[RMDB]
RNA sequence: GGGAACGACUCGAGUAGAGUCGAAAAUCAUCACGUUAACAGAGUAACCUUGUGCAAUAGUAUGAGCUUGUUGUAAAACGUCUUGAUACGACACCAUGACAUACCACGAUUACGCUCUUAAGGACAAACAUGUAUGUGCGUUCGCGCACAUACAUGUAAAAGAAACAACAACAACAAC
Reactivity to DMS in 0.01 (KOAc 150mM, MgCl2 10mM, bicine 150mM(pH8.5), 24C), signal-to-noise 3, nucleotides 027 to 126: u010c070a070u020c110a090c060g000u000u000a070a070c130a080g010a090g010u000a060a070c140c060u000u010g020u000g010c090a080a100u000a080g010u000a030u000g000a080g030c070u000u000g000u000u000g010u000a020a080a080a090c110g030u000c060u010u000g020a100u000a030c070g000a080c050a050c050c030a040u000g000a040c080a050u000a080c060c040a060c050g000a070u010u000a060c110g010c030u000c030u000u000a030a070g000g010a060c260a090a100
Reactivity to 2A3 in 0.01 (KOAc 150mM, MgCl2 10mM, bicine 150mM(pH8.5), 24C), signal-to-noise 3, nucleotides 027 to 126: u050c010a020u060c020a000c150g030u040u100a090a030c020a050g060a030g050u030a060a010c020c050u030u030g020u030g040c030a100a230u040a140g030u030a020u060g030a040g020c030u020u030g050u070u040g050u090a110a090a010a020c010g050u020c000u050u100g070a050u060a130c050g000a020c000a010c020c000a020u050g030a020c000a030u040a010c030c020a010c030g030a040u040u060a030c090g030c000u000c030u040u100a040a040g060g030a050c080a040a150